[RMDB]
RNA sequence: GGGAACGACUCGAGUAGAGUCGAAAAGAUAUGGAGAGUAGACAUGAUCGAUUGUUUCGGAAACGAAAUAGAGAUCAACAGCUACCUCCUAAGUCAAAAGUGACGUUUUGUUCGCAAAACGUCACAACCUGAUAUUGUCGUUCGCGACAAUAUCAGGAAAAGAAACAACAACAACAAC
Reactivity to 2A3 in 0.01 (KOAc 150mM, MgCl2 10mM, bicine 150mM(pH8.5), 24C), signal-to-noise 2, nucleotides 027 to 126: g040a020u080a060u150g000g010a010g030a090g040u010a000g020a060c070a210u090g000a010u030c030g130a200u010u280g020u010u020u020c020g020g060a090a060a040c010g000a010a000a020u050a020g070a000g000a010u010c000a030a060c050a020g060c010u000a000c000c000u010c000c010u020a110a020g060u010c040a000a000a040a210g000u020g000a010c020g000u000u010u000u010g050u030u060c140g000c180a000a000a010a000c000g000u020c000a000c010a010a010
Reactivity to DMS in 0.01 (KOAc 150mM, MgCl2 10mM, bicine 150mM(pH8.5), 24C), signal-to-noise 3, nucleotides 027 to 126: g000a030u000a300u010g000g000a010g000a240g020u000a000g010a040c070a130u000g010a020u000c000g020a300u020u010g020u010u000u000c000g000g000a090a040a200c000g000a000a000a000u000a020g020a300g000a000u000c010a020a070c280a180g010c000u000a000c010c030u000c000c010u010a030a080g010u000c040a060a020a070a090g030u000g020a040c000g000u000u010u000u000g000u000u000c240g020c000a000a000a000a010c000g000u000c030a020c000a030a060